An RNA of 207 nucleotides, treated with 2A3 and read out base by base. For 2A3, 483 sequencing reads were counted.

[RMDB]
RNA sequence: GGGAACGACUCGAGUAGAGUCGAAAAAGUGAAUGGACAUGAUAUCUCAUUACAAAUGCAUGUCAUACAGACUUAAAUAAUUAAAAUGUAUUCUACAAGUAUAACAUGUUAUCUUACUGCGUGUGGGAGGGGUAAAGGCAGCAUGAAUUCAGUGCUGGUUACGUCUUUCCUUCGGGAAAGACGUAACAAAAGAAACAACAACAACAAC
Reactivity to 2A3 in 0.01 (KOAc 150mM, MgCl2 10mM, bicine 150mM(pH8.5), 24C), signal-to-noise 2, nucleotides 027 to 156: a000g110u130g000a150a140u100g050g030a010c000a000u020g020a020u080a190u170c120u130c120a160u180u210a070c060a040a180a000u160g010c030a010u030g000u030c000a010u070a020c010a070g120a030c000u090u160a150a080a030u180a160a170u170u170a000a060a010a190u050g020u060a060u070u120c020u110a030c020a080a040g020u020a050u020a300a020c010a000u040g000u150u070a100u090c020u000u070a010c020u030g030c000g130u140g030u100g010g000g020a020g040g010g000g000u010a000a030a160g000g000c000a000g020c000a000u060g030a140a020u100u130c060a010g030u000g020c010u010g020
Source: RMDB library OK3TST, as collected in RNAgym.